This 207-nucleotide RNA was probed chemically with 2A3 and DMS. The reactions ran in a buffer of 150 mM KOAc, 10 mM MgCl2 and 150 mM bicine (pH 8.5), at 24 C. Reactivities are given for positions 27 through 156. For 2A3, 3,974 sequencing reads were counted.
[RMDB]
RNA sequence: GGGAACGACUCGAGUAGAGUCGAAAAUAGCUGCAACAUUAUUUGAGUAUCCUGAAAACGGCCUUUUCAGAAUGGUGUUGCCGUAUAAAAUUGUAGGAGUGCAUAGUGGCCCGUAUAGCAGGCAUUAGAGAGCUACAGAUGUUCGCAUCUGUAGCAAGAUGUAUAGUGACUUCGGUCACUAUACAUCAAAAGAAACAACAACAACAAC
Reactivity to 2A3 in 0.01 (KOAc 150mM, MgCl2 10mM, bicine 150mM(pH8.5), 24C), signal-to-noise 5, nucleotides 027 to 156: u080a020g030c010u000g010c000a010a010c000a030u030u050a070u060u080u040g050a040g100u090a070u150c020c000u020g020a030a010a030a050c120g080g000c000c010u020u040u050u030c030a080g030a090a040u020g010g000u010g010u000u010g000c000c010g020u040a040u060a140a080a040a080u150u150g040u080a030g000g050a040g030u040g020c030a030u060a100g070u060g040g020c010c000c010g030u070a050u040a100g070c070a030g000g010c000a010u020u090a050g050a010g010a020g080c000u000a000c000a000g000a000u000g020u060u080c170g000c080a010u010c000u000g010u000a000g000c000a000a000
Reactivity to DMS in 0.01 (KOAc 150mM, MgCl2 10mM, bicine 150mM(pH8.5), 24C), signal-to-noise 3, nucleotides 027 to 156: u000a150g030c030u000g000c000a020a050c020a040u010u000a090u000u000u010g000a250g010u010a070u000c020c010u000g010a030a020a020a060c040g020g010c120c060u000u000u000u020c030a040g010a040a040u010g000g010u000g020u000u000g010c000c040g020u010a100u010a060a080a050a100u000u000g010u000a080g000g010a120g030u000g020c030a120u010a080g010u010g010g010c020c000c050g000u010a100u010a080g020c030a030g010g000c040a090u000u010a090g000a170g000a160g010c000u000a000c010a010g000a010u000g010u000u010c300g050c010a010u000c010u000g010u000a000g020c000a010a040